[RMDB]
RNA sequence: GGGAACGACUCGAGUAGAGUCGAAAAACUGAUACCUUACGAGGUAUCAGAAUGACUUCGUGGUAGAGCGCCACGACCGGAAAAUAAAGAAAGCUCGAUUGAAACGCACCGUGUACGCACGGUGCGAAAAAGUCGAUCCAGUUCGCUGGAUCGACAACAGCCAUUUAUACUUCGGUAUAAAUGGCUGAAAAGAAACAACAACAACAAC
Reactivity to 2A3 in 0.01 (KOAc 150mM, MgCl2 10mM, bicine 150mM(pH8.5), 24C), signal-to-noise 1, nucleotides 027 to 156: a000c000u000g010a000u000a010c000c000u010u030a040c220g180a010g000g010u000a000u000c000a000g000a020a030u080g060a060c040u030u030c010g010u000g000g000u020a090g030a010g010c020g030c000c000a000c000g010a030c050c000g060g050a170a100a020a020u100a070a010a030g180a030a030a000g000c030u000c000g080a090u070u200g060a060a030a010c000g000c030a000c020c040g030u010g040u070a010c260g000c080a000c000g020g070u000g000c010g000a000a000a000a000a000g010u000c000g010a000u000c000c000a020g010u100u100c120g040c170u000g000g010a000u000c000g000a010c000a010a010

This 207-nucleotide RNA was probed chemically with 2A3. It was measured as part of the RMDB library M2RFPK. For 2A3, 770 sequencing reads were counted.